The record gives the reactivity of an RNA of 177 nucleotides to DMS and 2A3.
RNA sequence: GGGAACGACUCGAGUAGAGUCGAAAAGAGUGGAGCGGGGAUGAGCAAGUUGCUGCCACGGGGCACAGUGACAUUGCUGUUGGCCGACGUCGAGGGAUCCACCUGGCUGUGGGAGACCCAUCCAGACACCGUCACUUCUGUUCGCAGAAGUGACGGUAAAAGAAACAACAACAACAAC
Reactivity to DMS in 0.01 (KOAc 150mM, MgCl2 10mM, bicine 150mM(pH8.5), 24C), signal-to-noise 1, nucleotides 027 to 126: g000a070g010u020g020g000a100g050c030g000g000g000g000a170u050g000a000g020c000a010a040g000u020u050g000c090u010g000c130c020a030c050g040g000g070g040c260a080c040a000g000u000g020a000c030a160u010u000g010c000u000g000u000u040g000g040c050c050g000a090c100g010u000c000g000a060g000g000g050a300u000c070c010a050c060c020u000g000g000c170u070g020u090g000g020g000a240g020a060c000c000c000a120u000c040c030a150g000a100c220
Reactivity to 2A3 in 0.01 (KOAc 150mM, MgCl2 10mM, bicine 150mM(pH8.5), 24C), signal-to-noise 2, nucleotides 027 to 126: g190a080g060u130g000g000a050g000c020g030g000g020g000a050u110g100a020g070c050a090a060g040u110u070g000c040u070g000c000c010a110c060g050g010g000g000c000a000c000a000g040u080g030a110c160a300u090u100g030c030u030g030u150u090g070g040c020c000g050a070c000g030u050c030g000a050g040g000g000a080u040c000c000a030c000c020u010g070g000c050u030g010u110g020g010g010a120g020a020c000c010c010a030u020c000c070a040g040a070c110
2A3 adducts were read by reverse transcription with SuperScript II with manganese. The data come from the RNA Mapping Database (RMDB), library OK1LIB.